The record gives the reactivity of an RNA of 207 nucleotides to 2A3. It was measured as part of the RMDB library M2RFPK. The reactions ran in a buffer of 150 mM KOAc, 10 mM MgCl2 and 150 mM bicine (pH 8.5), at 24 C. 2A3 adducts were read by reverse transcription with SuperScript II with manganese.
RNA sequence: GGGAACGACUCGAGUAGAGUCGAAAAUAAGAAAAAUAAACAAGUGGUGGUAGUCCGCCACUCAAAGGGGACGCCUUUAGAAGAAGAGGCUAGGUGGUAUUCCGGUGUGGGAUACUUGGUAAUAUGUAAGGGGAUGGUACGUUCGCGUACCAUCCAAGCAUAAGAGCAUGUUCGCAUGCUCUUAUGCAAAAGAAACAACAACAACAAC
Reactivity to 2A3 in 0.01 (KOAc 150mM, MgCl2 10mM, bicine 150mM(pH8.5), 24C), signal-to-noise 2, nucleotides 027 to 156: u080a020a040g050a010a110a010a010a050u280a100a080a050c080a050a040g010u010g000g000u000g000g160u050a060g120u050c000c030g000c000c000a000c020u000c010a010a060a000g000g000g020g020a010c070g060c000c000u100u120u110a150g030a130a000g020a040a000g000a100g010g040c030u040a040g130g090u080g010g000u060a040u020u060c040c050g080g040u170g030u140g200g000g010a000u030a040c010u000u030g020g020u040a060a140u070a120u160g050u080a030a070g120g000g000g030a000u000g000g000u000a000c000g000u060u050c170g000c020g080u000a000c000c000a000u000c000c000a000a010